[RMDB]
RNA sequence: GGGAACGACUCGAGUAGAGUCGAAAAGUCAAGACAAAUUCACUCAACAGCAAGGUAGACAAACUAGAACAGUUUAUGAUGAUAAAAGGCCUGUAUGAUUGCGUGAAAAUCAUCAAGAAACCCACUCGAAAGCCAGACAAGGAUUCUGACAGCGAUAUAAUAGCUGCACUUUCGAGUGCAGCUAUUAAAAAGAAACAACAACAACAAC
Reactivity to 2A3 in 0.01 (KOAc 150mM, MgCl2 10mM, bicine 150mM(pH8.5), 24C), signal-to-noise 2, nucleotides 027 to 156: g040u030c030a050a000g030a030c010a010a060a050u030u010c010a030c000u030c000a040a040c020a010g050c010a010a220g030g040u060a010g070a120c050a030a030a000c010u030a070g050a200a050c020a040g010u070u000u110a090u070g060a010u020g050a040u100a170a060a000a000g050g000c010c000u010g070u050a190u040g080a300u000u010g020c020g020u020g000a010a020a000a080u060c050a010u020c030a010a060g040a050a060a040c020c010c010a030c040u050c030g090a060a000a030g010c000c010a000g000a000c010a040a140g100g000a090u100u020c020u070g030a040c080a020g040c040g140a010u040a000
Reactivity to DMS in 0.01 (KOAc 150mM, MgCl2 10mM, bicine 150mM(pH8.5), 24C), signal-to-noise 2, nucleotides 027 to 156: g010u010c030a050a120g040a130c030a040a080a200u000u010c080a060c070u010c000a040a110c020a180g000c060a040a120g000g050u000a120g020a190c050a100a060a070c070u010a050g060a080a220c060a040g000u000u000u010a070u000g000a120u030g030a080u000a040a100a160a190g030g030c020c010u000g080u000a020u060g010a080u000u010g000c090g000u010g020a050a050a090a090u000c040a050u000c060a040a080g020a090a040a120c030c000c020a080c090u020c070g000a020a040a140g060c010c040a020g030a080c040a080a100g000g000a150u000u000c000u000g000a030c000a120g010c050g000a090u010a050